[RMDB]
RNA sequence: GGGAACGACUCGAGUAGAGUCGAAAAGAUAUGGAUUUUCCAUUUGUGGAGAGCGAUGUGACUAUAGAUUCGGAAACGAAUCUACGAAUCACUAAGCUCUAUGAAGCAAAUGGAAAAUCCUAAGUCAGUGUCUAUAUACCUUCGGGUAUAUAGACACAAAAGAAACAACAACAACAAC
Reactivity to DMS in 0.01 (KOAc 150mM, MgCl2 10mM, bicine 150mM(pH8.5), 24C), signal-to-noise 2, nucleotides 027 to 126: g010a020u000a300u030g030g000a000u010u000u000u020c000c000a000u000u010u010g030u020g000g030a000g020a000g020c000g000a260u000g000u000g020a020c100u000a270u000a020g010a030u000u000c000g000g000a160a130a290c020g000a010a000u000c000u020a000c110g020a110a090u000c000a000c000u050a120a300g000c000u000c000u000a160u000g000a120a260g000c000a000a000a020u000g010g010a000a010a000a010u000c010c000u000a000a050g000u030c050a150